[RMDB]
RNA sequence: GGGAACGACUCGAGUAGAGUCGAAAACAGUCGCGAAGCGUAAAACCGUCAUGUGCGGUGACGAGAUUAAUCGCGGCACUCGGCAGACGACUAUUACGUUUAAAAACAUCGCUGGAGGCAGCAAAAAUCGUGGUGAUAUGUUCGCAUAUCACCACGAAAAAGAAACAACAACAACAAC
Reactivity to 2A3 in 0.01 (KOAc 150mM, MgCl2 10mM, bicine 150mM(pH8.5), 24C), signal-to-noise 1, nucleotides 027 to 126: c010a020g090u050c020g000c000g120a060a030g000c000g020u060a030a030a070a120c000c000g040u010c090a300u060g070u170g090c000g050g000u010g000a000c020g020a000g000a060u170u140a180a150u060c040g000c000g000g000c010a040c020u080c010g040g000c000a010g000a040c020g010a000c050u080a080u130u070a020c020g000u040u030u090a100a070a010a020a020c110a100u060c100g040c040u060g040g000a010g100g000c030a010g000c000a090a080a080a000a000
Reactivity to DMS in 0.01 (KOAc 150mM, MgCl2 10mM, bicine 150mM(pH8.5), 24C), signal-to-noise 1, nucleotides 027 to 126: c070a090g050u020c100g000c120g010a010a150g050c020g010u010a000a010a080a060c030c000g000u010c030a060u040g030u020g020c070g010g000u000g020a040c000g000a060g030a070u020u010a100a050u040c030g040c020g030g000c010a010c030u010c020g000g000c000a020g000a060c020g010a060c120u010a080u000u000a010c070g000u000u000u010a020a120a120a120a110c160a090u010c100g000c030u000g000g000a130g040g030c070a030g060c070a000a050a060a090a110

Conditions: 150 mM KOAc, 10 mM MgCl2 and 150 mM bicine (pH 8.5), 24 C. This 177-nucleotide RNA was probed chemically with 2A3 and DMS. It was measured as part of the RMDB library OK2TRN. For 2A3, 979 sequencing reads were counted.